Source: RMDB library OK1LIB, as collected in RNAgym.
An RNA of 177 nucleotides, treated with 2A3 and read out base by base.
Values cover nucleotides 27 to 126.
The reactions ran in a buffer of 150 mM KOAc, 10 mM MgCl2 and 150 mM bicine (pH 8.5), at 24 C.
For 2A3 the reverse transcriptase was SuperScript II with manganese.

RNA sequence: GGGAACGACUCGAGUAGAGUCGAAAACAGACUCGAGCGAAAGCUCGGCGAAAGCCGCGUACAUGUGAAUGUCGGCAUGUGUACAGUCGACAGUUACUCUUCGGAGUAACAAUAGAAACAACAACAAAGUACCCGGAGGGUUCGCCCUCCGGGUACUAAAAGAAACAACAACAACAAC
Reactivity to 2A3 in 0.01 (KOAc 150mM, MgCl2 10mM, bicine 150mM(pH8.5), 24C), signal-to-noise 1, nucleotides 027 to 126: c070a000g020a010c010u010c010g000a000g000c000g050a000a000a010g000c000u000c000g000g000c000g110a090a000a050g130c030c010g000c000g020u000a000c020a020u030g010u000g080a160a010u110g070u290c030g040g010c000a000u000g000u010g000u030a000c010a000g000u000c000g000a030c000a100g000u000u000a000c000u040c000u070u070c300g080g000a000g000u000a000a000c000a000a030u210a050g130a060a060a000c040a000a030c000a040a020c030a000a160